[RMDB]
RNA sequence: GGGAACGACUCGAGUAGAGUCGAAAAUCAACCUCUUGAGUUCCCCUUCUUCCUCCUCGCUGAGGCGCUUCCCUCCUGCGGAGAGCUGCUUCUUCUUGUUCUCGAGGGCCUUCCUUCUUCGGUGAUCGUGCACCGCUGUUCGCAGCGGUGAAAAGAAACAACAACAACAAC
Reactivity to 2A3 in 0.01 (KOAc 150mM, MgCl2 10mM, bicine 150mM(pH8.5), 24C), signal-to-noise 4, nucleotides 027 to 129: u090c020a030a100c030c000u080c040u060u130g040a010g020u030u020c000c000c000c000u020u030c000u030u010c000c010u010c000c000u020c000g020c020u030g020a050g020g020c030g010c030u020u010c000c000c000u060c010c040u060g070c060g010g020a080g010a010g050c060u080g020c000u040u040c000u060u010c040u060u100g040u070u020c030u000c020g020a040g020g040g020c000c000u030u070c020c000u050u080c000u020u040c000g070g000u060g050a100u080c030g030u050g040